Structure probing data (2A3 and DMS) for a 177-nucleotide construct. The reactions ran in a buffer of 150 mM KOAc, 10 mM MgCl2 and 150 mM bicine (pH 8.5), at 24 C.

[RMDB]
RNA sequence: GGGAACGACUCGAGUAGAGUCGAAAACCGCCCCGCGCCUGGUGAACCGACCCGGGUGGCUAGCAACUAUCAGUUCAAUACACAAAGCCGUCAUCGACAGGCAACUCAAUUCAGACUACUCUCACCCGAAAACAGUUUGGUUCGCCAAACUGUUUUCAAAAGAAACAACAACAACAAC
Reactivity to 2A3 in 0.01 (KOAc 150mM, MgCl2 10mM, bicine 150mM(pH8.5), 24C), signal-to-noise 6, nucleotides 027 to 126: c010c010g010c010c000c000c000g020c000g010c010c010u050g020g020u060g040a060a060c040c020g060a060c000c010c000g040g000g020u020g020g030c020u040a020g030c020a030a050c020u100a080u180c030a050g020u090u060c060a080a050u110a150c070a020c010a060a140a010g020c020c020g040u050c010a130u070c050g040a030c030a030g010g030c010a020a050c020u030c030a020a020u100u040c020a030g020a090c010u030a020c000u040c020u030c010a040c010c010c030
Reactivity to DMS in 0.01 (KOAc 150mM, MgCl2 10mM, bicine 150mM(pH8.5), 24C), signal-to-noise 2, nucleotides 027 to 126: c010c010g030c050c020c000c050g000c040g010c040c030u000g000g020u000g000a110a070c050c050g010a010c080c010c030g010g010g020u000g010g000c080u010a060g010c060a050a080c160u000a070u010c180a140g010u000u010c120a030a070u020a030c100a090c080a020a070a140g020c000c010g000u000c020a070u010c080g010a010c050a030g000g000c010a130a030c150u000c100a000a090u000u010c070a140g000a140c030u000a040c020u000c020u010c050a110c040c060c030